[RMDB]
RNA sequence: GGGAACGACUCGAGUAGAGUCGAAAAGAUGAUAUUGAGUACACAUCUCUAACCACAGCAGGACUGCUGUACGCCUACGCCGUGGGCUCAUCAGCGGAUUUGUCUCAACAGUUCUACGUCGGUGACGAUGCUGUUCCACCUUCGGGUGGAACAGCAUAAAAGAAACAACAACAACAAC
Reactivity to DMS in 0.01 (KOAc 150mM, MgCl2 10mM, bicine 150mM(pH8.5), 24C), signal-to-noise 1, nucleotides 027 to 126: g050a030u000g000a120u000a140u010u000g010a060g000u000a050c070a110c050a050u000c010u020c060u000a130a130c010c030a090c090a050g000c040a030g030g010a080c020u000g000c010u000g000u010a070c300g000c020c000u000a030c050g000c070c160g010u020g000g000g040c010u000c110a140u000c060a050g040c030g000g000a090u000u000u000g020u000c000u010c020a020a050c210a070g010u000u000c000u000a170c000g000u010c040g020g010u000g020a050c180g020
Reactivity to 2A3 in 0.01 (KOAc 150mM, MgCl2 10mM, bicine 150mM(pH8.5), 24C), signal-to-noise 1, nucleotides 027 to 126: g040a050u120g010a000u040a060u240u210g060a010g060u080a040c070a000c000a030u000c000u000c030u080a030a110c070c030a090c030a050g000c010a000g040g030a030c030u080g000c000u050g000u030a010c020g000c000c030u040a040c010g180c240c060g020u020g010g010g080c000u120c030a180u000c000a000g000c050g040g020a050u070u050u080g120u030c000u030c020a040a050c000a080g030u070u070c030u050a030c030g100u090c040g140g100u160g040a040c060g010
The record gives the reactivity of an RNA of 177 nucleotides to DMS and 2A3. The RNA was probed in 150 mM KOAc, 10 mM MgCl2 and 150 mM bicine (pH 8.5) at 24 C.